RNA sequence: GGGAACGACUCGAGUAGAGUCGAAAAUGUAGCAUUACGAUCUCUGGAGGAUUGUAUAAAUUACGUGACUAAAUCCGAGAAUAUGAUAGAAAUGAUGAAGGAAAGAUCGACUAUUUUAAAUAGCAUAGAUAUAGAAACGGAAUCGGUAGAUCGUCUAAACAAGAUAGGGAUUCGUCCCUAUCUUGUUAAAAGAAACAACAACAACAAC
Reactivity to DMS in 0.01 (KOAc 150mM, MgCl2 10mM, bicine 150mM(pH8.5), 24C), signal-to-noise 5, nucleotides 027 to 156: u000g030u000a100g020c100a220u000u000a050c030g020a040u000c010u010c000u000g030g060a220g020g030a050u000u020g020u000a040u010a070a060a110u010u000a050c050g010u010g020a220c050u000a050a100a190u000c020c020g010a140g020a100a100u000a060u010g010a140u010a090g020a100a060a090u000g020a090u010g010a110a100g000g000a080a110a110g010a070u010c030g020a070c000u000a030u000u000u000u010a040a120a070u000a030g020c010a080u000a090g000a100u010a100u000a100g000a060a080a080c040g000g010a050a040u000c020g010g020u000a080g020a070u000c050g000u000c030u000a070
Reactivity to 2A3 in 0.01 (KOAc 150mM, MgCl2 10mM, bicine 150mM(pH8.5), 24C), signal-to-noise 6, nucleotides 027 to 156: u120g030u030a040g050c060a060u030u100a010c020g010a030u000c060u010c060u150g090g040a060g020g020a030u070u060g050u050a060u050a110a100a050u150u090a040c060g020u040g060a020c020u060a040a030a090u040c030c010g010a020g020a070a060u130a090u170g060a030u040a120g080a030a080a050u130g040a030u070g030a070a020g040g040a110a030a040g030a040u040c010g020a030c010u020a060u020u080u040u090a100a220a060u050a010g000c000a030u040a090g040a010u060a010u020a120g080a040a080a000c070g040g030a050a020u040c030g010g010u030a030g000a070u030c020g000u010c040u040a030
Conditions: 150 mM KOAc, 10 mM MgCl2 and 150 mM bicine (pH 8.5), 24 C. The record gives the reactivity of an RNA of 207 nucleotides to DMS and 2A3. For 2A3 the reverse transcriptase was SuperScript II with manganese. For DMS the reverse transcriptase was MarathonRT.